[RMDB]
The record gives the reactivity of an RNA of 207 nucleotides to 2A3. Reactivities are rounded to 0.1 and cut off at 0 and 3. The reactions ran in a buffer of 150 mM KOAc, 10 mM MgCl2 and 150 mM bicine (pH 8.5), at 24 C. The 2A3 profile rests on 615 reads.
RNA sequence: GGGAACGACUCGAGUAGAGUCGAAAAUCGGUAUUCGUACCGAGUUCAAGAUAUGGAUGUAUGACCAUCUUUUGACGCUCGUGAUCACCUCGGAAACGAGGUGCGUACGAGCGAUAAGAUGGUACAUCCUAAGUCGUGUCAAUCAGUUCGCUGAUAAGCUGGUUAUUGACUUCGGUCAAUAACCAGCAAAAGAAACAACAACAACAAC
Reactivity to 2A3 in 0.01 (KOAc 150mM, MgCl2 10mM, bicine 150mM(pH8.5), 24C), signal-to-noise 1, nucleotides 027 to 156: u040c020g000g000u000a000u010u170c260g160u060a020c010c010g020a010g020u020u300c050a170a070g020a120u030a050u190g010g010a000u010g040u010a110u130g090a060c000c000a010u000c020u050u070u090u050g100a080c000g000c000u000c050g010u000g020a050u020c010a000c040c000u010c000g000g050a050a120a060c000g010a010g020g020u000g050c000g000u060a000c020g030a000g050c000g000a000u000a000a000g000a000u000g010g000u000a000c000a000u000c000c000u010a020a010g050u030c060g060u060g090u300c030a050a020u010c000a020g020u000u080c140g000c080u040g150a110u290a260a020